Chemical mapping of a 177-nucleotide RNA with DMS. Source: RMDB library TTRDEL, as collected in RNAgym. Conditions: 150 mM KOAc, 10 mM MgCl2 and 150 mM bicine (pH 8.5), 24 C. For DMS, 1,122 sequencing reads were counted.
RNA sequence: GGGAACGACUCGAGUAGAGUCGAAAAGAUAUGGAGCAGGUCGAAGAACUUACGUAACAUCAAUCGGAAACGAUUGUGGUAAGGGAGGUCUGCUCCUAAGUCAAAGGGCCUACUUCGGUAGGCCCAACUGCCACAUAGAGUUCGCUCUAUGUGGCAGAAAAGAAACAACAACAACAAC
Reactivity to DMS in 0.01 (KOAc 150mM, MgCl2 10mM, bicine 150mM(pH8.5), 24C), signal-to-noise 1, nucleotides 027 to 126: g010a010u010a300u020g050g020a040g020c040a020g000g000u000c010g000a110a090g000a140a190c020u000u000a010c010g010u010a040a070c170a090u010c000a010a000u000c000g000g000a120a120a160c010g010a000u010u000g010u000g000g000u010a000a020g000g000g000a110g020g000u000c010u000g000c000u000c000c000u030a020a050g000u000c040a090a140a050g030g000g000c000c010u000a030c000u000u010c160g010g010u000a010g020g030c020c000c020a000a010